[RMDB]
RNA sequence: GGGAACGACUCGAGUAGAGUCGAAAACGAGGAGUACUAUCACCAUAAUACAUUACACCAUGUCAUAUAUGUAAUGUGUUAAGAUGGUCGUAAGACAUGGUGAUCAUCUUAUGGUGAUGGUAUUCCGGCUUCACGGUGAUUUCGAUCAUUGUGGAGCAAAAGAAACAACAACAACAAC
Reactivity to DMS in 0.01 (KOAc 150mM, MgCl2 10mM, bicine 150mM(pH8.5), 24C), signal-to-noise 6, nucleotides 027 to 126: c060g010a130g010g010a010g010u000a000c000u000a010u000c000a000c000c000a030u010a070a080u020a040c030a010u000u010a040c010a050c050c040a030u000g000u020c130a100u020a110u030a110u020g010u000a020a010u000g010u000g010u010u020a070a050g000a010u000g000g020u000c050g010u020a080a090g000a100c100a040u000g000g000u010g000a010u000c010a000u000c020u000u000a030u000g000g010u000g010a000u000g000g020u000a000u000u000c000c000g000
Reactivity to 2A3 in 0.01 (KOAc 150mM, MgCl2 10mM, bicine 150mM(pH8.5), 24C), signal-to-noise 9, nucleotides 027 to 126: c080g040a080g010g000a000g000u000a000c000u000a000u000c000a000c000c000a010u030a030a020u070a040c020a010u030u020a010c010a010c050c060a060u070g120u170c110a060u160a030u040a030u290g040u060a050a020u040g040u010g060u080u070a040a020g010a020u030g020g040u030c020g060u100a070a050g070a070c060a090u120g100g010u110g040a030u020c000a000u000c000u010u030a020u020g000g000u000g000a000u000g000g000u000a000u000u000c000c000g000

An RNA of 177 nucleotides, treated with DMS and 2A3 and read out base by base. The reactions ran in a buffer of 150 mM KOAc, 10 mM MgCl2 and 150 mM bicine (pH 8.5), at 24 C. For 2A3 the reverse transcriptase was SuperScript II with manganese. DMS adducts were read by reverse transcription with MarathonRT.